This 177-nucleotide RNA was probed chemically with 2A3 and DMS.
For DMS the reverse transcriptase was MarathonRT.
The DMS profile rests on 5,011 reads.
The data come from the RNA Mapping Database (RMDB), library OK1LIB.
The 2A3 profile rests on 1,776 reads.
RNA sequence: GGGAACGACUCGAGUAGAGUCGAAAAGUACGUGAGGUUCUCUAUAUAUCCGCACCGUCGUAAACUAGUGCGCCACUGUUGAGACUACCUUCCUAGUAUAAGGCGGACAUUGUGCGGGGCGAAGCGCUACAAGCAGAGCAUUCGUGCUCUGCUUGUAAAAAGAAACAACAACAACAAC
Reactivity to 2A3 in 0.01 (KOAc 150mM, MgCl2 10mM, bicine 150mM(pH8.5), 24C), signal-to-noise 3, nucleotides 027 to 126: g120u080a060c090g030u060g000a010g000g030u050u010c020u000c020u010a030u000a050u000a040u230c020c010g030c010a040c020c050g030u010c010g070u110a080a050a020c020u000a040g030u020g010c030g030c020c030a070c050u070g040u130u140g030a050g020a090c050u080a100c020c010u030u090c010c020u010a000g030u050a120u010a130a040g030g000c010g010g020a050c040a100u110u160g070u010g020c010g000g020g000g000c000g030a100a020g060c030g000c010
Reactivity to DMS in 0.01 (KOAc 150mM, MgCl2 10mM, bicine 150mM(pH8.5), 24C), signal-to-noise 3, nucleotides 027 to 126: g020u010a010c080g010u020g000a040g000g000u010u000c000u000c000u020a110u020a160u090a090u010c030c000g030c050a100c020c090g000u000c060g020u000a030a050a020c070u000a050g010u000g000c040g000c030c020a030c130u030g020u000u010g010a150g020a140c080u020a080c060c020u010u010c050c010u000a030g010u000a060u000a110a190g010g000c020g000g000a120c110a060u040u050g000u020g000c020g010g010g010g000c080g020a030a080g020c080g030c060